[RMDB]
RNA sequence: GGGAACGACUCGAGUAGAGUCGAAAAAACACCGAGGCGCUGUAAGUUCGCGUUGAGCGACUUGCACCGUGGCUCACUCACAUCAUUCGCGAAGAGGACGCCGGUGUUCUUCAUGAGCUGCGCAAUGAUACUGACGGAUCUUCGGAUCCGUCAGUAUAAAAGAAACAACAACAACAAC
Reactivity to 2A3 in 0.01 (KOAc 150mM, MgCl2 10mM, bicine 150mM(pH8.5), 24C), signal-to-noise 3, nucleotides 027 to 126: a000a000c100a060c060c000g030a080g080g000c020g010c050u040g020u050a050a050g030u180u120c020g010c000g070u060u270g150a030g000c000g000a000c020u000u010g000c000a000c000c030g060u080g010g000c000u040c050a100c000u050c000a040c010a080u200c010a080u140u300c190g030c070g120a070a060g020a020g050g000a020c000g000c000c000g000g010u020g000u000u010c000u060u000c000a110u290g040a010g010c020u050g040c040g000c000a000a110u140g040
Reactivity to DMS in 0.01 (KOAc 150mM, MgCl2 10mM, bicine 150mM(pH8.5), 24C), signal-to-noise 2, nucleotides 027 to 126: a050a060c140a030c030c000g000a080g000g000c000g000c250u100g000u020a030a000g010u040u000c030g000c000g030u120u010g000a240g000c090g030a020c010u000u000g040c000a000c130c020g040u030g000g030c000u000c070a180c130u000c050a090c060a070u020c100a160u080u010c090g000c020g000a120a150g020a130g000g030a260c130g000c000c000g000g000u000g010u000u000c040u010u000c060a100u030g030a110g000c030u000g000c000g070c070a060a020u050g000

Structure probing data (2A3 and DMS) for a 177-nucleotide construct. The RNA was probed in 150 mM KOAc, 10 mM MgCl2 and 150 mM bicine (pH 8.5) at 24 C. The data come from the RNA Mapping Database (RMDB), library OK1LIB. DMS adducts were read by reverse transcription with MarathonRT. Reactivities are given for positions 27 through 126. The DMS profile rests on 1,565 reads.